Chemical mapping of a 177-nucleotide RNA with 2A3 and DMS. Conditions: 150 mM KOAc, 10 mM MgCl2 and 150 mM bicine (pH 8.5), 24 C. The data come from the RNA Mapping Database (RMDB), library OK1LIB. For DMS, 15,075 sequencing reads were counted. For 2A3 the reverse transcriptase was SuperScript II with manganese.
RNA sequence: GGGAACGACUCGAGUAGAGUCGAAAAUAAAUAUCGUUCGUUGUCAUCUGGUAUGUCAUUUAAUGGAGGAAGGAUUAUAUCUACGUUUGCAAUACCUGCUAUAGCUGGUACAGCUUCUGGUACUUUAAAUAUGCUAUGCAUUCGUGCAUAGCAUAUUAAAAGAAACAACAACAACAAC
Reactivity to 2A3 in 0.01 (KOAc 150mM, MgCl2 10mM, bicine 150mM(pH8.5), 24C), signal-to-noise 5, nucleotides 027 to 126: u170a010a070a020u170a060u060c050g050u060u010c030g020u010u050g040u030c030a080u000c050u050g000g050u100a100u100g090u030c070a070u040u100u130a250a130u130g050g010a020g030g010a070a050g010g020a090u090u070a080u090a030u090c050u030a040c120g050u050u080u020g000c000a020a040u010a080c020c010u020g000c060u090a050u110a300g000c000u000g040g030u110a110c080a060g010c000u070u060c020u060g100g000u060a050c000u000u050u020a000
Reactivity to DMS in 0.01 (KOAc 150mM, MgCl2 10mM, bicine 150mM(pH8.5), 24C), signal-to-noise 5, nucleotides 027 to 126: u030a060a080a070u040a070u030c070g010u010u000c070g000u000u010g010u000c050a060u000c020u000g000g000u010a040u070g010u010c060a040u000u010u010a070a080u020g000g000a060g010g010a080a090g000g000a040u020u020a060u020a090u020c030u000a070c090g010u000u000u010g000c030a070a130u000a040c040c020u010g020c080u020a060u030a090g010c010u010g000g000u010a040c150a080g000c020u000u010c040u000g010g020u010a040c020u010u000u000a050